An RNA of 177 nucleotides, treated with 2A3 and DMS and read out base by base. DMS (dimethyl sulfate) methylates the pairing face of unpaired adenines and cytosines. The reactions ran in a buffer of 150 mM KOAc, 10 mM MgCl2 and 150 mM bicine (pH 8.5), at 24 C. The DMS profile rests on 8,095 reads.
[RMDB]
RNA sequence: GGGAACGACUCGAGUAGAGUCGAAAAGAUAUGGACGUCCUUGGAUUUAUAAAGAUCCAGAAAUGUGUUGUCCGUCGGAAACGACGGCAACGAAUCUGGAUCUUUAUUGUCAGGACGUCCUAAGUCACUUUAUAUAUGUGUUCGCACAUAUAUAAAGAAAAGAAACAACAACAACAAC
Reactivity to 2A3 in 0.01 (KOAc 150mM, MgCl2 10mM, bicine 150mM(pH8.5), 24C), signal-to-noise 4, nucleotides 027 to 126: g010a000u110a070u200g010g000a010c000g020u000c020c000u030u200g160g010a070u300u300u100a040u120a030a010a000g010a000u010c000c010a030g060a010a300a040u300g220u020g040u080u020g200u290c050c020g000u000c010g040g000a100a040a030c010g000a000c000g010g020c020a000a000c010g010a030a050u030c020u000g000g000a010u000c000u000u000u000a000u000u000g000u000c000a000g000g000a000c000g000u000c000c000u000a000a000g000u010c010a010
Reactivity to DMS in 0.01 (KOAc 150mM, MgCl2 10mM, bicine 150mM(pH8.5), 24C), signal-to-noise 4, nucleotides 027 to 126: g010a050u000a300u000g010g010a000c000g010u000c010c010u000u020g020g010a020u000u010u000a010u010a010a000a010g010a010u000c000c000a010g010a000a110a120u010g040u010g010u000u000g010u010c010c010g030u000c000g000g010a130a140a200c020g000a010c000g010g010c000a000a000c010g010a190a100u000c000u010g000g000a010u000c000u000u000u010a000u010u000g010u000c010a030g000g010a010c000g010u000c000c000u000a000a060g020u000c040a250